[RMDB]
RNA sequence: GGGAACGACUCGAGUAGAGUCGAAAACAACCUGGGAGUUACGUCCGGAUAUUGCUCCAGGGGCAAUAGAACGGUAGACAUCAACUGAUGCGAGAGCAUCUCAACUUAUGGACCUUAGUGUAUCGCAAGACGACAGGUCCCGUCGGAAUUGCGUAGAAUAUAGCCGAUAGUUCGCUAUCGGCUAUAUAAAAGAAACAACAACAACAAC
Reactivity to DMS in 0.01 (KOAc 150mM, MgCl2 10mM, bicine 150mM(pH8.5), 24C), signal-to-noise 3, nucleotides 027 to 156: c040a070a200c040c010u020g010g020g020a150g030u000u000a080c090g030u000c000c010g000g010a240u000a050u000u000g010c000u000c020c050a290g010g020g020g020c030a020a060u010a020g010a110a150c040g020g000u000a100g000a070c050a080u000c090a080a170c060u010g000a070u000g000c020g000a290g010a260g030c020a020u000c000u000c070a070a110c110u000u010a070u000g030g010a010c020c010u000u000a100g010u000g020u000a080u000c010g060c060a060a100g010a130c020g020a060c080a070g020g010u010c010c000c060g000u000c040g000g010a170a130u000u000g010c000g000u000a160g010a080
Reactivity to 2A3 in 0.01 (KOAc 150mM, MgCl2 10mM, bicine 150mM(pH8.5), 24C), signal-to-noise 3, nucleotides 027 to 156: c050a000a070c000c000u010g060g020g050a050g040u060u060a030c030g070u030c020c000g000g000a080u050a020u040u010g000c000u030c000c050a090g070g000g010g000c010a010a040u010a040g140a150a030c030g020g000u020a040g040a070c020a090u090c030a070a040c060u090g000a010u020g000c000g040a050g000a010g070c000a020u000c010u000c020a030a170c040u210u180a090u180g030g040a030c020c020u140u060a070g030u070g020u180a100u160c000g000c030a020a020g020a030c000g010a010c010a010g080g050u020c030c010c000g010u020c040g000g060a120a010u050u040g000c000g000u000a020g100a140
Source: RMDB library OK3TST, as collected in RNAgym. The record gives the reactivity of an RNA of 207 nucleotides to DMS and 2A3. 2A3 adducts were read by reverse transcription with SuperScript II with manganese. For 2A3, 1,611 sequencing reads were counted.